About this RNA:
The data come from the RNA Mapping Database (RMDB), library OK1LIB. This 177-nucleotide RNA was probed chemically with 2A3.
RNA sequence: GGGAACGACUCGAGUAGAGUCGAAAAACUACGAAGAAGGCGGCAUGAUCAAGCACGCCUCGAUGAUGAUCAACGCCGUGUCCAACUCGAAGGUCCCGCACAUCUCCCUGCUACUCGGCGCCUCCUACCCAGGGGUCCUGUUCGCAGGACCCCUGGGAAAAGAAACAACAACAACAAC
Reactivity to 2A3 in 0.01 (KOAc 150mM, MgCl2 10mM, bicine 150mM(pH8.5), 24C), signal-to-noise 1, nucleotides 027 to 126: a000c060u090a060c060g040a100a090g010a050a010g050g020c020g000g010c010a000u050g000a060u060c050a080a130g000c030a020c100g080c000c000u000c010g000a020u050g000a000u050g000a020u010c000a000a090c120g000c000c000g040u030g030u080c010c020a000a010c020u000c030g050a040a000g030g010u060c000c000c060g050c000a030c060a030u070c020u040c010c000c040u090g030c000u000a040c030u020c010g000g060c040g090c000c030u040c000c000u040a030
Conditions: 150 mM KOAc, 10 mM MgCl2 and 150 mM bicine (pH 8.5), 24 C.